Chemical mapping of a 177-nucleotide RNA with 2A3 and DMS. For 2A3 the reverse transcriptase was SuperScript II with manganese. DMS adducts were read by reverse transcription with MarathonRT. For DMS, 4,464 sequencing reads were counted.

[RMDB]
RNA sequence: GGGAACGACUCGAGUAGAGUCGAAAAGCUCUAGGAGACUAGAGCGAUACGUACGAGCGAUCGUGUCACGACUAUCGCAUAGCCAGUUCAGAGGCAGUCAGAGGACAUAGCUAUAGCUAUGUCCAAAGACCAUUCAUACCUUCGGGUAUGAAUGGUCAAAAGAAACAACAACAACAAC
Reactivity to 2A3 in 0.01 (KOAc 150mM, MgCl2 10mM, bicine 150mM(pH8.5), 24C), signal-to-noise 5, nucleotides 027 to 126: g010c000u000c000u000a000g000g040a050g020a060c000u000a000g010a000g010c000g010a000u030a030c030g070u060a020c050g050a020g020c010g010a030u030c030g010u030g130u190c040a010c100g120a010c030u040a010u040c020g010c040a080u080a030g010c000c000a030g020u080u130c060a040g050a080g100g010c020a020g060u130c040a020g020a050g080g000a000c000a000u000a000g010c020u130a030u080a300g000c010u000a000u000g000u000c000c010a000a000a000
Reactivity to DMS in 0.01 (KOAc 150mM, MgCl2 10mM, bicine 150mM(pH8.5), 24C), signal-to-noise 3, nucleotides 027 to 126: g000c000u000c000u020a010g030g000a260g000a170c000u000a000g000a020g010c010g000a070u060a070c130g000u020a090c150g010a090g000c040g000a040u000c060g000u000g020u040c090a110c160g000a020c010u000a020u000c000g000c010a170u020a090g010c030c000a090g010u020u020c130a120g000a090g000g010c030a060g000u010c020a060g000a300g000g000a020c000a000u000a000g000c000u030a110u030a100g000c000u000a000u000g010u010c000c000a010a050a050
The data come from the RNA Mapping Database (RMDB), library OK1LIB. Reactivities are given for positions 27 through 126.